[RMDB]
RNA sequence: GGGAACGACUCGAGUAGAGUCGAAAAGAGGAUGACUUCGGUCAUCCUCAAAUAAGGAAACCUGCGAGGUGCCGAGAGUAAAUGCAAACACGCCAAACUCAAAAAGUGAAUUCUUCGGAAUUCACAACAUAGUAGGUAGGUUCGCCUACCUACUAUGAAAAGAAACAACAACAACAAC
Reactivity to DMS in 0.01 (KOAc 150mM, MgCl2 10mM, bicine 150mM(pH8.5), 24C), signal-to-noise 4, nucleotides 027 to 126: g000a020g000g010a010u000g010a010c000u000u010c190g030g000u000c000a000u000c000c000u000c000a010a040a060u010a110a130g000g000a090a100a090c020c020u000g010c110g010a100g020g010u000g000c050c020g000a120g000a050g010u000a060a070a080u000g010c050a050a060a100c160a060c110g010c020c060a050a090a100c060u020c070a080a060a060a090a090g010u000g000a000a000u000u000c010u000u000c190g020g010a030a000u000u000c000a000c000a080a110
Reactivity to 2A3 in 0.01 (KOAc 150mM, MgCl2 10mM, bicine 150mM(pH8.5), 24C), signal-to-noise 5, nucleotides 027 to 126: g000a010g010g010a010u020g000a000c020u050u090c260g010g010u010c010a000u000c000c000u000c000a000a000a000u020a000a010g030g000a050a110a100c030c040u070g090c140g070a100g010g030u040g030c030c030g040a040g000a000g070u080a060a120a050u090g010c030a090a150a040c050a030c100g040c030c040a080a120a060c030u040c080a070a120a010a040a010g000u000g000a000a010u010u010c010u010u050c140g040g010a010a000u010u000c000a000c000a000a000